Conditions: 150 mM KOAc, 10 mM MgCl2 and 150 mM bicine (pH 8.5), 24 C.
An RNA of 207 nucleotides, treated with 2A3 and DMS and read out base by base.
Reactivities are rounded to 0.1 and cut off at 0 and 3.
For DMS, 2,190 sequencing reads were counted.
2A3 adducts were read by reverse transcription with SuperScript II with manganese.
Reactivities are given for positions 27 through 156.
[RMDB]
RNA sequence: GGGAACGACUCGAGUAGAGUCGAAAAUGGGUGAUCCGCAGCCAAGUCCUAAGGCAACAGGCCUCUUCCCGCCCGUGGGGGAGAGUGUCCCGCGCUAUGGAUGCAGUUCAACGACUAAACGGUGAUGGGCUAGCGUAAUGAAUGCGUUCUGCACACUCGUAUUAGAAGACUUCGGUCUUCUAAUACGAAAAGAAACAACAACAACAAC
Reactivity to 2A3 in 0.01 (KOAc 150mM, MgCl2 10mM, bicine 150mM(pH8.5), 24C), signal-to-noise 6, nucleotides 027 to 156: u100g030g010g000u070g000a080u040c040c020g000c070a000g020c020c020a070a010g030u030c010c010u070a080a080g030g000c010a040a020c020a060g030g000c000c020u000c000u010u000c020c010c010g190c040c080c050g130u280g050g000g000g000g000a010g000a000g000u040g020u080c020c010c000g020c030g000c010u050a050u150g010g010a020u040g030c020a020g000u050u060c030a090a030c070g110a060c060u200a150a030a040c060g050g030u070g040a070u090g060g000g000c030u020a040g010c000g040u070a060a110u140g110a080a040u090g010c020g040u050u050c020u070g030c030a020c000a020c070u020
Reactivity to DMS in 0.01 (KOAc 150mM, MgCl2 10mM, bicine 150mM(pH8.5), 24C), signal-to-noise 1, nucleotides 027 to 156: u010g000g020g020u000g000a040u020c020c020g090c040a130g000c070c040a130a200g000u010c020c030u010a080a130g060g030c000a140a170c080a060g000g000c020c000u020c000u000u000c000c010c020g030c060c100c250g020u020g030g020g020g010g010a020g000a030g010u000g010u010c010c000c000g020c190g030c040u000a260u000g010g020a050u000g020c060a030g000u010u000c000a050a080c000g000a120c030u010a070a050a100c020g020g000u020g020a080u010g020g020g020c000u000a030g020c020g060u010a020a150u000g020a070a090u010g000c010g020u010u010c000u010g040c040a140c060a100c110u000